[RMDB]
RNA sequence: GGGAACGACUCGAGUAGAGUCGAAAACUAAGGGUCUUCGGACCCUUAGAAAUAACGGUCGGCUCAUGACGCUAGUCGAUCAUGCAGCUCGACCUAGACUAAAAAGGCUCAGGUUCGCCUGAGCCAAGAAUAUCUAUUCGUUCGCGAAUAGAUAUUCAAAAGAAACAACAACAACAAC
Reactivity to DMS in 0.01 (KOAc 150mM, MgCl2 10mM, bicine 150mM(pH8.5), 24C), signal-to-noise 6, nucleotides 027 to 126: c010u000a000a010g000g010g000u000c000u000u020c210g050g010a020c000c000c000u000u000a000g000a070a080a080u000a080a110c230g010g010u000c000g000g010c000u000c010a010u000g010a020c010g000c040u010a090g000u010c010g000a120u000c000a000u000g010c150a010g010c010u010c010g010a000c000c000u000a020g000a160c070u000a030a060a060a110a090g010g000c010u000c000a010g000g010u000u000c220g020c000c000u000g000a010g000c000c000a000a010
Reactivity to 2A3 in 0.01 (KOAc 150mM, MgCl2 10mM, bicine 150mM(pH8.5), 24C), signal-to-noise 3, nucleotides 027 to 126: c000u010a010a000g000g000g000u010c010u030u080c170g040g010a010c000c000c000u010u000a000g000a000a010a000u110a050a020c060g000g000u000c000g000g000c000u000c010a010u000g000a000c000g000c040u050a050g150u300c020g080a300u000c010a010u010g020c090a000g010c070u120c110g000a000c000c000u000a010g020a010c040u060a060a000a030a070a060g000g000c000u010c000a000g030g040u050u080c170g070c020c000u000g000a000g010c000c000a000a000